[RMDB]
RNA sequence: GGGAACGACUCGAGUAGAGUCGAAAAGAAGGGAAAGGAGAGCCAUGGACAGUCUCCAGAGGUUCCUAAGGCCUCGUUCGCGCCUGCAGGGAGGCAGAAUGUCCCGGUUGUCCAUGUAAGAAGAAGAAUGAUAUAGUGCAUUCGUGCACUAUAUCAUAAAAGAAACAACAACAACAAC
Reactivity to 2A3 in 0.01 (KOAc 150mM, MgCl2 10mM, bicine 150mM(pH8.5), 24C), signal-to-noise 8, nucleotides 027 to 126: g080a020a040g060g010g030a080a080a050g040g010a040g010a000g040c030c010a050u050g010g000a010c020a050g060u020c010u010c030c030a010g010a020g040g040u070u160c020c030u090a060a080g060g000c000c000u020c010g080u060u070c060g010c050g020c060c020u060g010c030a060g000g020g050a010g030g000c010a010g070a100a060u090g020u040c000c000c020g010g000u020u030g020u000c010c010a000u030g050u080a040a170g030a060a010g070a030a010g070a090
Reactivity to DMS in 0.01 (KOAc 150mM, MgCl2 10mM, bicine 150mM(pH8.5), 24C), signal-to-noise 9, nucleotides 027 to 126: g010a070a060g000g010g010a050a070a100g010g000a050g010a080g010c080c020a060u010g000g000a030c040a100g000u010c030u000c020c030a110g010a120g010g010u000u010c040c110u020a090a110g000g000c000c000u010c060g010u030u010c080g010c140g000c050c040u010g010c110a110g010g000g010a050g000g010c010a120g010a070a080u010g010u000c000c010c140g000g000u010u000g000u000c020c050a070u010g010u030a090a070g010a090a090g000a120a090g000a130
This 177-nucleotide RNA was probed chemically with 2A3 and DMS. Conditions: 150 mM KOAc, 10 mM MgCl2 and 150 mM bicine (pH 8.5), 24 C. Values cover nucleotides 27 to 126. For DMS, 37,482 sequencing reads were counted. DMS adducts were read by reverse transcription with MarathonRT.